The data come from the RNA Mapping Database (RMDB), library TTRDEL. An RNA of 177 nucleotides, treated with DMS and 2A3 and read out base by base. Values cover nucleotides 27 to 126. The 2A3 profile rests on 2,549 reads.
[RMDB]
RNA sequence: GGGAACGACUCGAGUAGAGUCGAAAAGAUAUGGAUCCGGUGCCAGAGCAACAGCUCGGAAACGAGACAUGCUCGCACCAGGAUCCUAAGUCAAACCUUCAGUUGAGCUUCGGCUCAACUGAAGGAACCCCAAUGAGAUGUUCGCAUCUCAUUGGGGAAAAGAAACAACAACAACAAC
Reactivity to DMS in 0.01 (KOAc 150mM, MgCl2 10mM, bicine 150mM(pH8.5), 24C), signal-to-noise 1, nucleotides 027 to 126: g000a010u000a300u000g000g000a000u010c000c020g000g000u020g030c040c240a180g030a020g020c010a020a110c210a160g000c020u000c010g000g030a080a080a100c000g000a020g000a090c070a250u000g010c000u010c010g000c000a020c000c010a070g020g000a000u020c040c000u000a010a090g000u000c040a060a140a190c000c000u000u010c000a020g000u000u000g000a010g010c020u020u020c220g020g000c000u000c000a010a000c000u000g000a000a000g000g000a000a000
Reactivity to 2A3 in 0.01 (KOAc 150mM, MgCl2 10mM, bicine 150mM(pH8.5), 24C), signal-to-noise 1, nucleotides 027 to 126: g020a030u110a010u160g000g010a000u000c010c000g000g020u030g050c160c240a150g010a000g020c000a010a110c040a190g040c030u000c000g030g040a070a040a000c020g000a000g010a020c030a050u070g000c000u020c000g000c000a000c000c010a010g000g000a000u020c010c000u000a040a010g070u020c040a110a040a050c000c000u010u020c020a030g000u000u000g010a010g030c030u020u210c300g130g000c020u010c000a000a000c000u000g000a020a000g010g010a000a000